Structure probing data (2A3 and DMS) for a 177-nucleotide construct. The DMS profile rests on 887 reads. As a SHAPE reagent, 2A3 marks flexible, mostly unpaired nucleotides at the ribose 2'-OH. The RNA was probed in 150 mM KOAc, 10 mM MgCl2 and 150 mM bicine (pH 8.5) at 24 C. The data come from the RNA Mapping Database (RMDB), library OK1LIB.

RNA sequence: GGGAACGACUCGAGUAGAGUCGAAAAUUCAUAUCGGGCCUACCGCCUUCCUCGGCUUGGGUGUUGUCGACAACAACGGCAACGGCGCACGAGUCCAACGCGUGGUCGGGAGCGCUCCGGCGGCAAGGUAGGCAGAGCAAUUCGUUGCUCUGCCUACAAAAGAAACAACAACAACAAC
Reactivity to 2A3 in 0.01 (KOAc 150mM, MgCl2 10mM, bicine 150mM(pH8.5), 24C), signal-to-noise 2, nucleotides 027 to 126: u070u060c040a030u080a050u250c050g070g030g000c010c030u050a040c040c030g020c010c020u070u050c010c010u060c010g050g000c000u010u110g010g140g000u040g030u010u010g060u000c030g030a100c100a290a020c020a120a040c060g030g000c000a000a100c010g050g050c070g020c050a140c090g010a000g090u060c050c070a140a070c070g010c060g070u040g010g050u020c010g020g000g040a050g000c090g000c040u050c000c000g040g000c050g000g030c060a120a000g120
Reactivity to DMS in 0.01 (KOAc 150mM, MgCl2 10mM, bicine 150mM(pH8.5), 24C), signal-to-noise 1, nucleotides 027 to 126: u030u080c020a000u010a070u000c010g060g000g020c090c000u000a210c060c030g000c040c010u000u000c130c000u000c160g000g000c030u000u100g000g000g040u010g000u000u000g060u000c000g000a210c090a290a140c180a100a110c060g000g030c000a000a060c030g040g000c140g000c130a130c130g060a040g000u000c070c190a190a120c300g000c060g100u000g000g010u060c020g000g000g000a180g000c120g000c110u000c100c010g000g000c000g030g000c300a070a010g000